The data come from the RNA Mapping Database (RMDB), library OK3TST. Chemical mapping of a 207-nucleotide RNA with 2A3. For 2A3 the reverse transcriptase was SuperScript II with manganese.
RNA sequence: GGGAACGACUCGAGUAGAGUCGAAAAAACUUUUAAUAGCUAGGAUUGUUAUGUACCAUCCUAAUGUUGGCUUACGCGGUCUCAGGAACAACGUUCCCCAAGAUCGCUACAUCAAUGCCGACGGCCAUUACAGUUUCCAUCUGCCCCGAGCUAAGACACUCGAAUAGAACUUCGGUUCUAUUCGAGUAAAAGAAACAACAACAACAAC
Reactivity to 2A3 in 0.01 (KOAc 150mM, MgCl2 10mM, bicine 150mM(pH8.5), 24C), signal-to-noise 1, nucleotides 027 to 156: a000a000c190u260u150u020u000a050a300u050a060g050c020u010a010g000g000a000u040u040g050u050u180a160u270g140u120a010c020c020a020u000c000c000u020a030a050u300g000u000u000g000g010c000u100u050a020c090g060c050g010g000u000c000u020c040a030g060g000a030a010c130a140a070c270g030u000u020c000c000c000c000a080a000g000a000u000c000g020c000u020a020c060a030u130c080a080a030u170g020c000c000g000a000c000g020g010c010c000a030u040u020a030c030a020g020u060u090u000c060c030a020u060c010u090g030c000c000c000c010g050a060g000c030u130a050a040g230a000c180
The 2A3 profile rests on 395 reads.